[RMDB]
RNA sequence: GGGAACGACUCGAGUAGAGUCGAAAACUUUAAUCGCGUAUCGUCAUCGGCGCUUUCUGAUCUACUUUGCUCAUCUACCUCGCCAAGUAAAACUGGAACCCCUCCUCUGAGCGAAUUGUCUAGAUACGAGCCACUAUGUAUUCGUACAUAGUGGCUCAAAAGAAACAACAACAACAAC
Reactivity to DMS in 0.01 (KOAc 150mM, MgCl2 10mM, bicine 150mM(pH8.5), 24C), signal-to-noise 1, nucleotides 027 to 126: c080u000u000u010a160a110u030c060g030c090g000u010a110u030c110g010u000c200a060u010c070g010g030c060g010c040u000u000u020c020u030g030a090u010c010u010a030c050u020u000u000g020c010u000c010a040u000c140u000a080c080c050u000c080g000c000c010a010a080g010u000a110a020a130a210c050u010g010g040a050a190c060c010c020c010u000c010c000u000c060u000g000a090g030c050g000a060a030u020u010g010u000c040u000a040g020a130u010a040c190